[RMDB]
RNA sequence: GGGAACGACUCGAGUAGAGUCGAAAACUCUUUUCUGUAAAGAGGAGACUGCUGGACCCGCCGCCCAAGUUCGAGCAUGGGCCAUCUCCGAGCGAAGAGGACGCGCCGGAAGGAUCAGCUCCCGAGAGGGGUAAGACGGUAAAGAGCAUUGGAACGCGACCAGAUACAUGUUCGCAUGUAUCUGGUCAAAAGAAACAACAACAACAAC
Reactivity to 2A3 in 0.01 (KOAc 150mM, MgCl2 10mM, bicine 150mM(pH8.5), 24C), signal-to-noise 1, nucleotides 027 to 156: c000u000c080u050u000u070u090c030u110g190u250a200a100a100g000a050g060g000a050g000a020c130u140g060c020u020g060g040a110c020c000c020g010c040c060g000c000c000c000a120a130g060u140u070c100g060a090g060c080a140u060g000g040g020c110c000a060u080c180u000c000c020g050a060g020c010g000a000a030g010a080g090g040a000c040g030c060g020c040c010g010g030a010a060g060g020a050u080c040a040g050c050u030c000c060c030g060a030g000a020g030g030g030g000u060a020a010g000a000c050g020g050u060a030a110a000g040a010g000c060a060u110u200g030g000a140a000c060g050c050